RNA sequence: GGGAACGACUCGAGUAGAGUCGAAAAGGAGGCCUCACGGAGUCUACAGCAAGAGUCAGUGACGGAUUCAAAGAAGGGCCUUUGGCAAAAGGAAAUCCUCAGGUCUUUGGUCAGGUGAUCUGUCUGACUUCUGUGAAAAUUUCGAUUUUCACAGAAGAAAAGAAACAACAACAACAAC
Reactivity to 2A3 in 0.01 (KOAc 150mM, MgCl2 10mM, bicine 150mM(pH8.5), 24C), signal-to-noise 2, nucleotides 027 to 126: g030g020a030g000g030c010c000u010c030a040c050g040g000a030g090u040c020u060a040c070a080g040c040a080a070g020a030g190u050c060a010g020u020g060a010c050g020g030a020u110u070c040a050a060a100g070a030a050g030g020g000c000c000u020u010u030g050g000c040a060a050a050a040g040g030a130a120a080u070c010c010u010c020a020g100g000u000c000u090u070u140g050g000u040c020a040g020g080u060g060a060u000c040u090g050u010c000u000g010a020
Reactivity to DMS in 0.01 (KOAc 150mM, MgCl2 10mM, bicine 150mM(pH8.5), 24C), signal-to-noise 6, nucleotides 027 to 126: g000g010a080g010g010c020c020u000c060a080c110g010g000a070g010u000c020u000a090c100a130g010c130a110a090g010a060g010u010c030a060g010u010g010a060c110g000g000a140u000u000c040a070a090a130g020a090a090g000g010g010c010c000u000u000u000g010g000c260a040a040a060a070g010g000a090a080a100u000c020c010u000c060a060g010g010u000c010u000u000u010g010g000u010c050a050g010g020u010g010a060u000c060u000g010u000c020u000g000a190